[RMDB]
RNA sequence: GGGAACGACUCGAGUAGAGUCGAAAAGAUGAGACUCUUGCUGUACGCGAAUAGCAGCGUUAGUUGGAGUACUGACGCUUGAAUACGUGUAUUCAAGGUGAAGUUCUCCAACUUCACCGGUCUCAGAGAUAGGUUAGUAGUUCGCUACUGAUCUAUCAAAAGAAACAACAACAACAAC
Reactivity to DMS in 0.01 (KOAc 150mM, MgCl2 10mM, bicine 150mM(pH8.5), 24C), signal-to-noise 9, nucleotides 027 to 126: g010a130u010g010a010g010a010c000u010c150u010u010g010c030u010g010u000a070c130g010c140g010a110a060u030a100g010c040a020g000c020g020u020u010a010g000u000u010g010g000a050g000u010a010c000u000g000a300c300g000c000u000u000g010a030a010u000a020c040g020u020g010u000a010u000u000c000a010a020g010g000u000g000a000a020g000u000u000c050u010c050c050a010a010c000u000u000c100a070c130c170g000g000u000c010u000c000a020g000a150
Reactivity to 2A3 in 0.01 (KOAc 150mM, MgCl2 10mM, bicine 150mM(pH8.5), 24C), signal-to-noise 9, nucleotides 027 to 126: g100a070u060g000a000g000a000c000u020c030u090u160g010c020u020g020u040a020c070g030c030g090a100a070u090a070g020c020a000g000c000g010u020u040a010g000u000u030g050g030a020g020u020a000c000u010g010a010c000g020c110u010u020g000a010a000u040a020c050g060u080g030u060a000u000u010c010a000a010g010g020u020g020a000a000g000u010u010c030u000c020c000a000a000c000u000u000c010a020c000c020g000g000u000c000u000c010a010g010a000